[RMDB]
RNA sequence: GGGAACGACUCGAGUAGAGUCGAAAAUGUAGUAGAUGUGGGCAAUCUCGUACUCCGCGGCGGCCCGUCCCUCGAGAUCGUCGGGAUAGCGUUCGAGGACCGUCUGAUAGUAGAGGAGCGCCGUCUGCGCAAUAUGCUCGUUCGCGAGCAUAUUGCGAAAAGAAACAACAACAACAAC
Reactivity to 2A3 in 0.01 (KOAc 150mM, MgCl2 10mM, bicine 150mM(pH8.5), 24C), signal-to-noise 2, nucleotides 027 to 126: u190g010u040a090g040u040a020g000a030u050g010u150g070g000g030c000a030a070u000c040u030c050g030u040a030c030u010c030c040g030c040g040g000c010g010g000c000c060c020g020u120c030c000c000u000c010g090a070g000a070u040c030g030u010c000g040g050g030a060u090a050g090c060g070u180u150c110g030a110g000g180a040c010c000g000u010c110u200g000a040u050a050g080u020a030g010a030g000g040a020g020c030g040c000c030g020u010c030u090g060
Reactivity to DMS in 0.01 (KOAc 150mM, MgCl2 10mM, bicine 150mM(pH8.5), 24C), signal-to-noise 2, nucleotides 027 to 126: u000g040u010a070g010u000a050g020a060u000g010u000g000g000g000c070a070a080u000c030u010c060g010u000a040c080u000c100c040g020c060g000g000c010g000g000c020c030c020g010u000c100c010c000u000c010g000a150g000a030u000c030g000u000c040g010g020g010a070u010a060g010c150g000u010u000c150g010a090g010g000a150c020c000g000u000c010u010g030a070u010a060g010u000a120g010a030g000g010a120g000c300g010c010c010g030u000c010u010g010